[RMDB]
Chemical mapping of a 177-nucleotide RNA with 2A3 and DMS. 2A3 adducts were read by reverse transcription with SuperScript II with manganese. For DMS, 1,991 sequencing reads were counted. The data come from the RNA Mapping Database (RMDB), library TTRINS. The RNA was probed in 150 mM KOAc, 10 mM MgCl2 and 150 mM bicine (pH 8.5) at 24 C. Reactivities are given for positions 27 through 126.
RNA sequence: GGGAACGACUCGAGUAGAGUCGAAAAGAUAUGGAGUGACUACCCACCUUGUUGGUCGCUUGGACCCGUCAACUAUCGGAAACGAUAGUUGACGGCUAGCGACCAACAAGAGGUCACUCCUAAGUCACCUUUAUUCAAGGUUCGCCUUGAAUAAAGGAAAAGAAACAACAACAACAAC
Reactivity to 2A3 in 0.01 (KOAc 150mM, MgCl2 10mM, bicine 150mM(pH8.5), 24C), signal-to-noise 2, nucleotides 027 to 126: g160a100u290a210u300g000g000a000g000u000g000a000c000u170a300c020c010c040a020c010c030u000u010g000u000u020g000g000u000c010g000c060u080u150g060g110a200c030c020c020g000u010c000a000a000c000u020a020u010c000g060g060a210a080a050c020g000a030u020a000g030u010u020g000a000c010g000g000c010u000a010g020c000g000a000c000c010a000a000c020a000a000g010a000g000g000u000c000a000c000u000c000c000u010a020a010g170u110c040a080
Reactivity to DMS in 0.01 (KOAc 150mM, MgCl2 10mM, bicine 150mM(pH8.5), 24C), signal-to-noise 2, nucleotides 027 to 126: g010a110u010a180u000g030g010a010g020u000g000a010c000u010a210c040c040c070a300c110c000u000u010g000u010u000g040g010u010c000g000c000u000u010g000g000a100c300c030c010g000u000c000a000a020c010u000a010u000c010g000g000a110a120a250c010g020a030u000a010g010u010u000g000a000c000g030g000c030u000a010g000c000g000a010c000c020a000a000c000a010a000g000a050g020g010u000c010a000c020u010c010c000u000a000a080g000u000c180a140